[RMDB]
RNA sequence: GGGAACGACUCGAGUAGAGUCGAAAAGAUAUGGAGCAUUGUGCAAGCUGUUCGGAAACGAAUACAGUGAUGACCACACUGCUCCUAAGUCAAAACCACAAAGGACCGUUCGCGGUCCUUUGUGGAAGUUCUAAGGAAUGUUCGCAUUCCUUAGAACAAAAGAAACAACAACAACAAC
Reactivity to DMS in 0.01 (KOAc 150mM, MgCl2 10mM, bicine 150mM(pH8.5), 24C), signal-to-noise 4, nucleotides 027 to 126: g000a030u000a300u000g010g000a010g000c000a020u000u000g020u010g010c020a080a190g020c010u010g010u000u000c000g000g010a100a080a190c000g000a040a060u010a040c020a010g030u000g010a070u020g000a190c300c000a010c020a000c040u000g000c000u000c000c000u010a000a060g010u000c040a060a080a120a170c000c010a000c010a000a010a010g000g010a010c010c000g030u000u020c240g020c010g000g000u000c000c000u010u000u000g010u000g000g010a010a020
Reactivity to 2A3 in 0.01 (KOAc 150mM, MgCl2 10mM, bicine 150mM(pH8.5), 24C), signal-to-noise 3, nucleotides 027 to 126: g020a010u070a020u140g000g010a000g000c020a010u030u000g020u010g020c050a170a230g000c030u020g010u020u010c020g010g040a050a090a060c020g020a050a050u250a200c010a010g020u020g200a300u130g040a040c050c000a000c000a000c010u000g000c000u000c010c000u020a110a000g010u000c010a010a000a080a190c000c000a000c000a000a010a000g000g000a000c010c000g030u090u150c300g020c010g180g000u000c000c000u000u000u000g000u000g010g000a000a020